[RMDB]
Structure probing data (2A3 and DMS) for a 177-nucleotide construct. 2A3 adducts were read by reverse transcription with SuperScript II with manganese. The data come from the RNA Mapping Database (RMDB), library M2PK50. DMS adducts were read by reverse transcription with MarathonRT. The 2A3 profile rests on 53,147 reads. The reactions ran in a buffer of 150 mM KOAc, 10 mM MgCl2 and 150 mM bicine (pH 8.5), at 24 C. Values cover nucleotides 27 to 126.
RNA sequence: GGGAACGACUCGAGUAGAGUCGAAAAGCUAGGCAUUUCGAUGCCUAGCGAGCGCAGAGUCUAUGCAUCUCUGAAUCACAGAACAGCCGUGUCUAUGCGUGGGAGUAUCCCUCUUCGGAGGGAUAAACCGUAUCAUAACAUUCGUGUUAUGAUACGGAAAAGAAACAACAACAACAAC
Reactivity to 2A3 in 0.01 (KOAc 150mM, MgCl2 10mM, bicine 150mM(pH8.5), 24C), signal-to-noise 9, nucleotides 027 to 126: g000c000u000a000g010g000c000a010u030u080u140c240g110a010u010g000c000c000u000a000g000c000g000a020g000c040g000c010a010g010a010g040u020c030u110a070u150g010c010a110u040c030u000c000u080g080a170a080u170c060a090c010a170g060a100a020c030a050g030c010c010g040u040g020u040c020u030a040u050g010c010g020u050g020g090g000a080g040u030a010u000c000c010c000u000c010u020u020c170g100g000a010g000g000g000a000u000a000a000a000
Reactivity to DMS in 0.01 (KOAc 150mM, MgCl2 10mM, bicine 150mM(pH8.5), 24C), signal-to-noise 9, nucleotides 027 to 126: g010c000u000a000g000g010c000a010u000u000u010c180g010a030u000g010c000c000u000a000g010c000g000a060g020c070g010c020a030g000a060g010u000c040u000a110u010g010c050a100u000c110u000c020u000g010a150a110u010c190a130c050a050g000a050a100c170a100g010c030c040g010u000g000u000c020u000a040u000g010c040g020u000g000g010g010a130g010u000a020u000c000c000c000u000c000u000u010c160g020g000a010g000g000g010a000u000a000a060a140